The record gives the reactivity of an RNA of 177 nucleotides to DMS and 2A3. The data come from the RNA Mapping Database (RMDB), library RFMREP. The DMS profile rests on 3,390 reads. 2A3 adducts were read by reverse transcription with SuperScript II with manganese. The RNA was probed in 150 mM KOAc, 10 mM MgCl2 and 150 mM bicine (pH 8.5) at 24 C. For 2A3, 2,246 sequencing reads were counted.

RNA sequence: GGGAACGACUCGAGUAGAGUCGAAAAUUUUGAAGAUGAGAAAGUGACGAUACUUUACGGAACGUGCGGACAGUGCAACUGCCAUCUUAAAGAGGAAGAAUAGAAAAAAGCAUGCGGCCAUUUACAGCUAAUAUUAGAAGUUCGCUUCUAAUAUUAGAAAAGAAACAACAACAACAAC
Reactivity to DMS in 0.01 (KOAc 150mM, MgCl2 10mM, bicine 150mM(pH8.5), 24C), signal-to-noise 4, nucleotides 027 to 126: u000u010u010u020g020a070a080g010a100u000g010a110g010a050a080a050g020u000g000a070c080g010a100u010a070c060u000u010u000a090c080g000g000a070a070c060g010u000g010c050g000g010a050c050a050g000u010g010c070a060a090c050u000g010c020c030a040u010c030u000u000a040a070a090g000a070g000g000a050a050g000a070a080u010a090g000a010a020a050a060a090a070g000c040a010u000g010c070g010g000c010c040a030u000u000u010a080c110a110g010
Reactivity to 2A3 in 0.01 (KOAc 150mM, MgCl2 10mM, bicine 150mM(pH8.5), 24C), signal-to-noise 2, nucleotides 027 to 126: u030u020u030u120g040a010a020g030a060u110g040a030g030a130a100a010g030u020g050a010c060g020a020u050a170c050u070u030u130a040c070g010g050a090a030c050g020u040g000c020g010g050a040c030a030g000u040g050c040a040a020c020u040g010c000c000a030u010c020u040u070a090a070a030g060a030g080g020a010a020g030a040a050u130a070g120a060a120a010a000a030a000g030c020a020u040g000c010g030g010c010c020a050u110u100u060a060c020a010g000